[RMDB]
RNA sequence: GGGAACGACUCGAGUAGAGUCGAAAAAAUGUUACCAGCGAUAUAUGACCAAUCUGUUAAAAAUGCUUUCUCUGGUGUAGACAUAAAUGUAAUCGCACUUAACGUAGUAGCAUAAAUUGAAAAGCCACGUUUAUCGUAGCUUCGGCUACGAUAAACGAAAAGAAACAACAACAACAAC
Reactivity to 2A3 in 0.01 (KOAc 150mM, MgCl2 10mM, bicine 150mM(pH8.5), 24C), signal-to-noise 1, nucleotides 027 to 126: a000a000u030g000u000u000a000c000c000a020g000c000g000a000u000a020u000a000u230g060a030c000c000a000a000u160c020u030g120u100u090a030a030a030a030a030u080g000c000u010u040u050c000u000c000u010g000g000u090g090u020a000g020a000c030a000u180a120a060a000u000g080u160a020a280u000c020g040c100a000c020u000u280a250a110c110g110u230a000g070u000a000g040c000a170u000a010a160a000u140u230g220a280a140a000a000g010c000c090a050